[RMDB]
RNA sequence: GGGAACGACUCGAGUAGAGUCGAAAACACGAUCAUGGUAAAGGCGACGUACAUGAUAGUCUGGACGGUGUCCAAAAAUAACAUGGGUGUGUUGAGGUGCAUCACGUUGUAGUUGCUCAUGUUCAUCUCGUAUUGGUCCACCACGUUAAAGUACGCACUCUAAUGCCGAUUUCGAUCGGCAUUAGAGAAAAGAAACAACAACAACAAC
Reactivity to DMS in 0.01 (KOAc 150mM, MgCl2 10mM, bicine 150mM(pH8.5), 24C), signal-to-noise 2, nucleotides 027 to 156: c050a040c010g000a060u000c020a030u010g020g050u020a030a090a070g110g000c020g010a230c050g020u000a040c050a050u010g020a140u000a100g020u000c110u000g000g010a080c020g000g000u010g000u040c030c030a000a050a060a110a100u000a090a070c060a040u010g020g020g000u000g000u000g040u010u010g000a080g000g040u010g070c080a090u000c070a090c120g010u000u000g000u000a080g000u010u010g010c010u000c040a130u010g000u000u000c030a060u000c030u000c030g000u000a120u000u000g040g020u000c030c040a050c050c000a080c100g000u000u010a100a040a090g000u000a040c010g030c080a180
Reactivity to 2A3 in 0.01 (KOAc 150mM, MgCl2 10mM, bicine 150mM(pH8.5), 24C), signal-to-noise 2, nucleotides 027 to 156: c110a000c040g030a030u050c030a010u060g120g050u140a060a060a060g080g020c010g050a050c010g020u060a020c010a030u080g010a060u080a070g050u000c110u090g060g030a060c090g090g040u080g000u050c000c010a040a070a000a010a030u180a030a030c050a030u070g000g000g010u110g000u010g020u030u120g030a040g060g010u080g020c010a050u030c020a000c100g040u050u040g060u080a090g020u060u100g000c030u020c020a000u000g000u050u030c030a090u020c080u020c080g020u110a070u040u070g030g010u060c050c020a020c040c030a060c110g000u050u110a090a020a010g040u050a070c020g000c050a010

Chemical mapping of a 207-nucleotide RNA with DMS and 2A3. Values cover nucleotides 27 to 156. The 2A3 profile rests on 1,610 reads.